[RMDB]
This 207-nucleotide RNA was probed chemically with 2A3 and DMS. For DMS, 3,299 sequencing reads were counted.
RNA sequence: GGGAACGACUCGAGUAGAGUCGAAAAGGUCGCUCUCCGCACCUCUCUCCCGGCGCCACGAGACCUCAUCUCCGAGACGGAAGCUUUGUGGUAGCUAGCAGGGAAGAAGAAAUGGAAGAAGACCGAGAAGGCUACUCUGCGCUGGCCACCGUAGUGGGUAUCAACUACAGUUCGCUGUAGUUGAUACAAAAGAAACAACAACAACAAC
Reactivity to 2A3 in 0.01 (KOAc 150mM, MgCl2 10mM, bicine 150mM(pH8.5), 24C), signal-to-noise 6, nucleotides 027 to 156: g010g000u010c010g040c090u020c010u000c020c010g030c020a120c010c010u030c000u000c000u000c010c000c000g010g000c010g000c000c000a010c010g030a020g030a110c030c040u090c090a190u060c060u060c110c110g060a090g050a160c150g040g030a070a060g060c000u050u180u300g030u020g000g020u040a190g020c010u040a040g100c060a050g000g000g000a000a100g010a050a000g020a020a150a010u100g030g010a050a050g010a060a010g000a010c020c040g000a030g000a050a040g040g000c010u050a020c020u040c060u130g020c020g000c040u030g050g000c030c000a030c030c050g060u090a050g060u070g060g070
Reactivity to DMS in 0.01 (KOAc 150mM, MgCl2 10mM, bicine 150mM(pH8.5), 24C), signal-to-noise 2, nucleotides 027 to 156: g000g000u000c010g020c060u000c030u010c020c130g050c070a150c050c020u000c040u000c000u000c030c010c010g020g040c020g000c020c020a080c020g000a080g020a060c010c010u010c010a150u010c030u000c160c170g000a170g010a170c060g020g010a080a060g020c020u000u000u000g040u010g000g010u000a060g050c020u010a090g050c110a100g000g050g020a120a090g000a100a080g000a060a120a060u010g020g010a100a090g010a110a170g030a060c020c000g000a170g020a130a130g050g020c030u000a050c030u010c050u000g010c000g020c020u000g020g010c010c010a090c050c010g010u010a090g010u000g000g000